[RMDB]
RNA sequence: GGGAACGACUCGAGUAGAGUCGAAAACGCUUAAUUGGCGGCUCGCAUGAAGGUUCAACGAGAGUCCCACUGUCCCCACAUUCAGCCCCGUGAAAUUAAUGUACUGGUGCACAAUCCAGUCUCUCCCCGACGUUUACAAUUUCGAUUGUAAACGUCGAAAAGAAACAACAACAACAAC
Reactivity to 2A3 in 0.01 (KOAc 150mM, MgCl2 10mM, bicine 150mM(pH8.5), 24C), signal-to-noise 8, nucleotides 027 to 126: c040g010c020u080u100a110a020u150u200g050g000c010g030g010c020u020c020g020c050a100u100g080a100a030g140g010u110u090c050a070a030c040g030a020g010a010g150u040c000c010c010a030c020u010g050u050c000c000c010c010a040c000a040u090u090c040a030g020c010c000c000c010g050u050g060a050a050a080u150u140a070a070u130g050u110a040c000u020g010g000u040g020c140a020c040a130a030u020c000c000a010g010u000c000u000c000u010c010c010c000
Reactivity to DMS in 0.01 (KOAc 150mM, MgCl2 10mM, bicine 150mM(pH8.5), 24C), signal-to-noise 4, nucleotides 027 to 126: c070g000c030u000u030a090a120u010u030g030g010c020g000g000c030u000c050g020c110a130u000g010a100a080g010g010u010u010c080a050a140c030g000a090g000a120g010u010c010c010c020a120c090u000g000u000c020c010c010c040a070c090a070u010u010c090a060g010c040c000c020c010g000u020g010a030a060a040u010u030a090a070u020g010u030a030c000u000g020g010u010g010c170a100c260a130a090u010c020c000a020g020u000c020u000c070u000c000c010c030
About this RNA: The data come from the RNA Mapping Database (RMDB), libraries RFM100 and RFMREP. This 177-nucleotide RNA was probed chemically with 2A3 and DMS. For 2A3 the reverse transcriptase was SuperScript II with manganese. Reactivities are given for positions 27 through 126.